[RMDB]
Chemical mapping of a 207-nucleotide RNA with DMS and 2A3. Conditions: 150 mM KOAc, 10 mM MgCl2 and 150 mM bicine (pH 8.5), 24 C. DMS (dimethyl sulfate) methylates the pairing face of unpaired adenines and cytosines. 2A3 adducts were read by reverse transcription with SuperScript II with manganese.

RNA sequence: GGGAACGACUCGAGUAGAGUCGAAAACAGGUUAGCAACGAGUUUUUUCGCACCGUUACCAAAAAAGCUGUCAAACUCCGAGACCUGAUGACACGCAUACGAAAAUUUACAUCCUUAGGAUUGAAUCGCCAGACAUCCAGGACAUAUGCCCAAAUGGAAUAAUCGUACCGUUCGCGGUACGAUUAUUAAAAGAAACAACAACAACAAC
Reactivity to DMS in 0.01 (KOAc 150mM, MgCl2 10mM, bicine 150mM(pH8.5), 24C), signal-to-noise 2, nucleotides 027 to 156: c050a020g000g010u000u000a080g040c020a050a060c000g020a060g040u010u020u000u000u000u010c150g000c050a080c010c020g000u000u000a100c010c040a000a080a060a060a080a110g000c020u010g010u000c050a050a080a040c040u000c020c020g020a230g000a060c020c000u000g000a090u000g000a110c010a090c030g000c060a080u000a090c070g000a020a070a030a100u000u000u010a120c110a090u000c010c030u010u040a180g010g040a070u010u000g010a070a140u000c060g010c040c070a160g020a110c070a090u000c010c010a110g000g010a070c050a070u000a040u000g010c060c000c010a050a070a070u000g000g000
Reactivity to 2A3 in 0.01 (KOAc 150mM, MgCl2 10mM, bicine 150mM(pH8.5), 24C), signal-to-noise 2, nucleotides 027 to 156: c010a000g050g020u090u120a050g070c080a090a040c020g020a060g020u010u000u000u050u090u100c090g030c000a020c030c040g060u030u070a060c060c080a060a090a030a030a000a020g020c040u050g050u110c040a030a020a020c000u000c040c030g090a070g010a070c020c020u010g010a050u030g040a030c030a010c120g020c030a020u070a080c070g130a010a090a100a010u110u170u200a070c050a030u060c010c010u080u090a050g000g030a020u060u040g060a140a070u040c050g020c080c020a010g000a040c010a040u000c030c000a000g000g010a020c040a040u130a050u090g030c000c000c060a000a110a070u130g090g040